[RMDB]
RNA sequence: GGGAACGACUCGAGUAGAGUCGAAAAGAACAGUGGAUCCAGAGAGGCAGCAUUCAGCGCUGUCGAUCAACUGUGUUUUCUCUGGUAGGUGACCCAAACGGCACAUUUCCAAGGUGGCCACAAAUGAAUAUUAAUGAGUCUUCGGACUCAUUAAUAUAAAAGAAACAACAACAACAAC
Reactivity to 2A3 in 0.01 (KOAc 150mM, MgCl2 10mM, bicine 150mM(pH8.5), 24C), signal-to-noise 4, nucleotides 027 to 126: g030a050a000c020a020g030u030g050g000a020u040c040c040a040g040a010g000a070g190g000c000a000g010c010a040u170u280c070a180g140c040g000c100u000g010u020c020g000a020u010c020a000a050c010u040g020u000g060u190u040u100u020c030u010c010u030g070g040u060a130g020g110u120g070a140c030c010c010a050a100a020c050g000g010c010a010c010a200u090u080u080c050c020a030a050g080g020u040g060g040c040c000a060c060a020a130a060u220g080a060
Reactivity to DMS in 0.01 (KOAc 150mM, MgCl2 10mM, bicine 150mM(pH8.5), 24C), signal-to-noise 9, nucleotides 027 to 126: g010a100a050c030a020g010u000g010g010a040u010c030c300a100g010a120g020a140g000g010c000a010g010c010a140u010u010c300a130g010c170g000c010u000g020u000c020g000a050u000c040a050a040c030u010g000u000g000u000u000u010u000c020u000c030u010g010g000u010a070g010g010u000g000a080c020c010c040a050a080a100c170g000g000c070a040c070a080u000u000u010c060c060a080a130g000g020u000g000g010c020c030a060c150a050a070a080u000g000a100
About this RNA: The record gives the reactivity of an RNA of 177 nucleotides to 2A3 and DMS. For 2A3, 5,038 sequencing reads were counted.